RNA sequence: GGGAACGACUCGAGUAGAGUCGAAAAUGUCUGUGGCCAAGCAAGGGGGACAGAGUAUGCGAGAGUAAUUGGAGUUCAUGCAAGUUCUAACCAGCUUACUCAGUAGCUGGGUGAAUUGCAGUACUCCAAGAAAUUGCACUUUCGAGUGCAAUUUCUUAAAAGAAACAACAACAACAAC
Reactivity to DMS in 0.01 (KOAc 150mM, MgCl2 10mM, bicine 150mM(pH8.5), 24C), signal-to-noise 4, nucleotides 027 to 126: u020g020u010c020u000g020u030g000g040c040c040a090a110g020c150a090a100g010g010g000g010g000a060c070a080g000a060g000u010a050u010g000c090g020a050g010a100g020u010a060a080u020u010g000g000a030g010u000u000c010a150u020g000c000a030a020g000u000u000c000u000a100a140c010c000a020g000c000u000u010a090c250u040c230a160g010u020a020g000c000u000g010g000g000u000g010a020a020u000u000g000c000a020g000u000a010c010u000c020c000
Reactivity to 2A3 in 0.01 (KOAc 150mM, MgCl2 10mM, bicine 150mM(pH8.5), 24C), signal-to-noise 4, nucleotides 027 to 126: u140g040u000c050u040g040u030g090g090c020c000a040a000g050c030a050a080g110g010g010g020g000a010c030a040g010a000g030u060a070u190g020c060g030a070g010a010g080u120a160a130u080u060g010g000a010g000u010u060c070a080u110g000c000a000a050g060u020u020c060u050a160a190c010c000a000g020c000u030u040a040c070u050c170a110g100u130a000g000c010u010g000g000g010u020g010a000a000u010u010g000c010a000g000u000a020c000u000c000c000

The record gives the reactivity of an RNA of 177 nucleotides to DMS and 2A3. Values cover nucleotides 27 to 126. The 2A3 profile rests on 2,016 reads. It was measured as part of the RMDB libraries RFM100 and RFMREP.